[RMDB]
RNA sequence: GGGAACGACUCGAGUAGAGUCGAAAAUGACCGUUUCGACGGUCAAAAAAAUCCUAAGUCUGGAGGCUGUGACCACGAGGAUCAGAUCGGAAACGAUCUGGGAGUGGCAAUGCAGCCGUUGAAAGAUAUGGAAAAAACAAGGACUUCGGUCCUUGAAACACUAGGUAUUAUUCGUAAUACCUAGUGUAAAAGAAACAACAACAACAAC
Reactivity to 2A3 in 0.01 (KOAc 150mM, MgCl2 10mM, bicine 150mM(pH8.5), 24C), signal-to-noise 2, nucleotides 027 to 156: u110g040a010c020c000g010u150u080u050c170g030a060c040g000g150u000c000a080a070a000a000a000a000a060u080c080c010u130a280a060g070u000c010u010g040g010a030g020g000c010u010g030u050g260a140c010c000a000c000g050a200g040g000a010u030c000a000g010a000u000c000g010g030a080a020a030c000g000a000u000c000u000g000g000g010a020g000u000g000g000c010a020a030u070g000c000a000g010c010c000g000u000u000g000a010a020a000g000a000u050a050u140g030g010a070a130a040a050a000a050c020a000a000g000g000a000c000u050u180c300g070g000u000c000c000u010u000g010a030a040
Reactivity to DMS in 0.01 (KOAc 150mM, MgCl2 10mM, bicine 150mM(pH8.5), 24C), signal-to-noise 3, nucleotides 027 to 156: u000g000a010c000c000g020u000u000u010c230g020a090c000g010g000u000c000a000a000a040a100a070a070a110u000c010c010u010a130a260g020u000c020u000g000g010a190g000g040c000u000g000u000g000a090c000c010a010c010g010a190g050g000a080u000c020a010g020a010u000c010g040g000a160a110a300c000g010a020u010c000u010g010g000g020a100g010u010g010g010c030a010a060u000g020c020a020g010c000c010g030u000u020g000a150a170a060g010a070u000a300u000g030g000a000a050a060a110a080a100c000a030a000g000g000a040c000u000u000c300g080g000u000c000c000u000u000g000a110a100